[RMDB]
RNA sequence: GGGAACGACUCGAGUAGAGUCGAAAACUCCAGCUGAAUCGAAGCGAGUAUCGAUUCAGAGAACUGACUUGAUGCUUUCGCUUAUCACACCUCAAUAGUGUGUUAGCUGGCACAUUGAGUUAUGUACGAUGAUCAGAUCUUUCGAGAUUUGGUCAUCAAAAGAAACAACAACAACAAC
Reactivity to 2A3 in 0.01 (KOAc 150mM, MgCl2 10mM, bicine 150mM(pH8.5), 24C), signal-to-noise 9, nucleotides 027 to 126: c020u000c010c000a030g020c010u010g010a010a020u030c020g010a040a010g150c080g100a060g110u090a080u030c000g000a000u000u000c000a000g020a010g030a090a060c030u030g020a000c000u010u020g010a020u020g060c030u050u160u170c040g000c010u050u110a040u110c000a000c000a000c010c030u140c070a100a100u070a150g000u000g000u000g000u000u010a000g000c010u030g020g000c030a010c010a070u020u040g020a010g020u030u040a110u230g070u040a050c110
Reactivity to DMS in 0.01 (KOAc 150mM, MgCl2 10mM, bicine 150mM(pH8.5), 24C), signal-to-noise 9, nucleotides 027 to 126: c090u010c010c030a120g010c000u000g000a020a020u010c050g000a020a060g020c170g010a160g020u030a050u000c000g000a000u000u000c000a000g010a140g020a130a090c040u000g000a010c030u000u000g000a020u000g000c100u000u020u020c140g000c000u000u030a020u020c010a000c000a000c010c050u000c300a110a120u050a170g000u000g010u000g000u000u000a010g000c000u020g010g000c280a130c080a040u010u010g000a030g000u000u000a040u030g000u010a100c170